[RMDB]
RNA sequence: GGGAACGACUCGAGUAGAGUCGAAAAGUGCACGGGGACCCCUUGGACUUAAGCAUAUCAGUAAAGGGAGGAGAAGAAACCAAAUGGGAUUGCCUGAGUAGCGGCGAGUGAAAUGGCAUGAGCCUGUGUGGUAACUGCGUUUGGCGGGUUGUGUUUGCCCUGUAUUAGAGUUCGCUCUAAUACAGGGAAAAGAAACAACAACAACAAC
Reactivity to DMS in 0.01 (KOAc 150mM, MgCl2 10mM, bicine 150mM(pH8.5), 24C), signal-to-noise 1, nucleotides 027 to 156: g000u000g010c010a050c020g000g030g060g060a170c040c000c030c050u000u000g030g000a060c020u000u000a110a150g010c070a100u000a130u000c120a120g010u000a050a050a060g010g000g010a050g050g010a140g010a060a050g000a060a100a090c010c050a050a100a070u000g080g030g000a120u010u000g020c020c020u010g010a080g000u000a180g030c040g040g040c150g000a090g060u010g000a080a100a210u010g010g030c000a020u000g000a220g010c000c030u020g030u010g000u030g000g040u000a060a030c060u010g010c030g000u000u000u000g050g010c000g030g010g000u010u010g030u020g030u000u000u000g020
Reactivity to 2A3 in 0.01 (KOAc 150mM, MgCl2 10mM, bicine 150mM(pH8.5), 24C), signal-to-noise 3, nucleotides 027 to 156: g030u030g010c040a010c020g010g010g040g030a050c020c010c010c000u000u040g060g070a040c030u090u080a040a010g040c010a070u110a080u220c070a050g070u150a070a090a070g030g000g000a030g000g020a050g000a050a030g030a040a070a020c040c040a020a090a110u070g010g010g020a010u030u040g000c010c010u020g010a020g020u020a000g000c030g090g030c170g040a010g030u070g040a020a040a030u040g010g000c010a000u060g020a000g070c010c020u040g000u020g000u000g040g000u030a070a020c030u050g020c030g050u030u060u090g030g010c010g020g020g000u000u040g010u020g010u030u020u070g020
This 207-nucleotide RNA was probed chemically with DMS and 2A3. For 2A3, 2,655 sequencing reads were counted. DMS adducts were read by reverse transcription with MarathonRT. DMS (dimethyl sulfate) methylates the pairing face of unpaired adenines and cytosines. It was measured as part of the RMDB library PDB130. The DMS profile rests on 1,696 reads.